[RMDB]
RNA sequence: GGGAACGACUCGAGUAGAGUCGAAAACAAAUUUUCGGGAUCAUCAGUCUAACAACGACUUCUCAUUGGAGGCUCUUGCUUGGAGUGCACAUUUCACAUCUGAACACCGUAAGCGGUGCUCCCUUGCACUUCGUUGUAUUCGGUAGAGCCCACAAAAGUCCUAUCCAUAUUUCGAUAUGGAUAGGACAAAAGAAACAACAACAACAAC
Reactivity to 2A3 in 0.01 (KOAc 150mM, MgCl2 10mM, bicine 150mM(pH8.5), 24C), signal-to-noise 4, nucleotides 027 to 156: c010a020a110a060u170u140u180u200c080g010g000g030a020u060c030a030u020c030a060g040u000c020u080a060a050c040a040a020c030g030a020c020u100u020c060u040c090a070u070u080g060g010a050g130g060c010u010c030u130u270g030c010u050u090g040g020a110g030u010g030c040a040c010a070u080u160u120c110a140c040a180u090c110u160g040a060a020c000a020c040c000g150u140a050a040g000c020g020g020u020g020c010u010c010c010c000u010u060g020c020a010c030u010u000c010g010u030u030g030u020a070u030u110c000g000g030u010a050g000a010g010c000c000c010a050c020a000a080a010a020
Reactivity to DMS in 0.01 (KOAc 150mM, MgCl2 10mM, bicine 150mM(pH8.5), 24C), signal-to-noise 2, nucleotides 027 to 156: c030a050a100a190u000u000u010u000c070g030g040g000a050u000c020a150u000c020a080g020u010c040u000a050a060c040a040a070c020g010a040c140u000u010c020u000c040a060u000u000g020g010a040g000g000c000u000c020u000u010g030c040u000u000g040g010a030g030u000g020c010a070c100a170u000u010u000c050a100c070a080u010c070u000g020a080a120c020a010c010c040g010u000a040a130g040c050g000g010u000g000c010u000c000c020c040u000u000g020c090a010c020u000u010c020g040u000u000g000u000a060u000u000c040g040g000u000a180g000a060g000c000c000c010a050c070a050a060a090a190
Conditions: 150 mM KOAc, 10 mM MgCl2 and 150 mM bicine (pH 8.5), 24 C. The record gives the reactivity of an RNA of 207 nucleotides to 2A3 and DMS. For DMS, 4,110 sequencing reads were counted. For 2A3, 2,446 sequencing reads were counted. For DMS the reverse transcriptase was MarathonRT. It was measured as part of the RMDB library OK3TST.